[RMDB]
RNA sequence: GGGAACGACUCGAGUAGAGUCGAAAAGGCCAGUCCGAAAGCCGCCGAGAUCACGCCGUCGUUGGUGCUCCACACCGUCUGAUAGAACUUGUGUUCGUCGGUGUUGCCGGCUAGUUCGGCGGUGGCGGCGCCGUCAAGUUUUCGAACUUGACGGCGCAAAAGAAACAACAACAACAAC
Reactivity to DMS in 0.01 (KOAc 150mM, MgCl2 10mM, bicine 150mM(pH8.5), 24C), signal-to-noise 2, nucleotides 027 to 126: g010g050c020c020a160g030u060c040c030g000a090a190a120g010c020c000g020c020c000g000a010g000a020u080c120a100c290g020c090c000g000u000c120g030u010u030g060g020u030g010c060u000c060c140a180c010a040c010c020g000u030c060u000g020a060u020a080g020a010a070c090u020u010g020u060g010u000u000c000g030u000c000g000g010u010g000u000u000g000c080c000g010g010c000u000a300g000u010u000c010g000g040c000g000g050u000g000g000c030g050
Reactivity to 2A3 in 0.01 (KOAc 150mM, MgCl2 10mM, bicine 150mM(pH8.5), 24C), signal-to-noise 3, nucleotides 027 to 126: g060g040c010c000a030g100u110c030c030g110a040a000a000g010c000c000g040c000c010g030a050g020a030u200c070a030c100g010c000c000g030u070c000g070u070u180g070g000u100g050c050u050c040c000a010c000a000c010c000g010u020c070u170g160a160u130a190g010a050a030c050u200u300g100u120g000u270u000c000g000u000c010g010g020u010g000u010u030g000c010c000g050g000c020u010a020g110u080u040c000g000g010c000g000g000u030g000g000c030g020

Source: RMDB library OK1LIB, as collected in RNAgym. Structure probing data (DMS and 2A3) for a 177-nucleotide construct. Reactivities are given for positions 27 through 126. For 2A3, 1,382 sequencing reads were counted.